The data come from the RNA Mapping Database (RMDB), library TTRDES. The record gives the reactivity of an RNA of 177 nucleotides to DMS and 2A3.
RNA sequence: GGGAACGACUCGAGUAGAGUCGAAAAGAUAUGGAUAUGGUAGGGAGCCUAACAUUCGGAAACGAAUGAGGCGACGAUCUACAAUAUCCUAAGUCAAAAGAUUUAGUCAGUUCGCUGACUAAAUCAACAUAAGUCUAGACUUCGGUCUAGACUUAUGAAAAGAAACAACAACAACAAC
Reactivity to DMS in 0.01 (KOAc 150mM, MgCl2 10mM, bicine 150mM(pH8.5), 24C), signal-to-noise 5, nucleotides 027 to 126: g010a040u000a300u020g000g000a010u020a000u000g000g040u000a010g010g010g000a110g010c000c000u010a130a200c030a000u000u000c000g020g000a100a070a190c010g010a000a010u010g010a060g000g010c000g000a060c300g000a050u010c010u000a010c010a040a010u000a010u000c000c000u000a030a110g000u000c030a120a100a150a090g020a020u000u000u000a000g000u010c000a010g010u000u020c300g020c010u000g000a020c000u000a000a000a000u000c000a080a240
Reactivity to 2A3 in 0.01 (KOAc 150mM, MgCl2 10mM, bicine 150mM(pH8.5), 24C), signal-to-noise 2, nucleotides 027 to 126: g020a020u050a020u120g000g010a010u000a010u040g060g010u000a010g000g080g090a060g000c020c000u050a240a100c010a010u010u020c010g010g000a090a050a020c020g000a010a010u010g010a010g050g010c020g030a090c030g030a060u010c000u010a000c000a020a010u010a000u000c000c000u020a070a020g060u000c010a120a030a020a160g010a000u000u000u010a000g000u000c010a000g030u010u130c260g010c220u000g000a010c010u000a000a000a000u010c000a010a010

High DMS reactivity at an A or C suggests that its Watson-Crick edge is free. Values cover nucleotides 27 to 126.